[RMDB]
RNA sequence: GGGAACGACUCGAGUAGAGUCGAAAAAAAAGAUAUGGACUAGAUUGUCAGGUGGUAUUACUAUCUAUAUCGGAAACGAUAUAGACGAAUAAUAUCCACCUUGGAUUUAUCUAGUCCUAAGUCAAAAUCCAUAUGAGUACUUCGGUACUCAUAUGGAAAAAGAAACAACAACAACAAC
Reactivity to DMS in 0.01 (KOAc 150mM, MgCl2 10mM, bicine 150mM(pH8.5), 24C), signal-to-noise 1, nucleotides 027 to 126: a070a040a050a070g010a040u040a300u010g010g000a030c000u000a000g000a020u000u010g010u000c050a080g010g020u000g020g010u000a010u000u000a000c130u000a220u000c000u000a000u000a010u000c000g010g000a110a060a150c020g010a000u000a000u000a030g000a050c070g020a090a030u000a000a000u000a010u030c010c000a000c000c020u000u000g010g010a000u000u000u000a000u000c000u000a020g010u000c000c010u000a000a050g010u000c080a100a080a100a070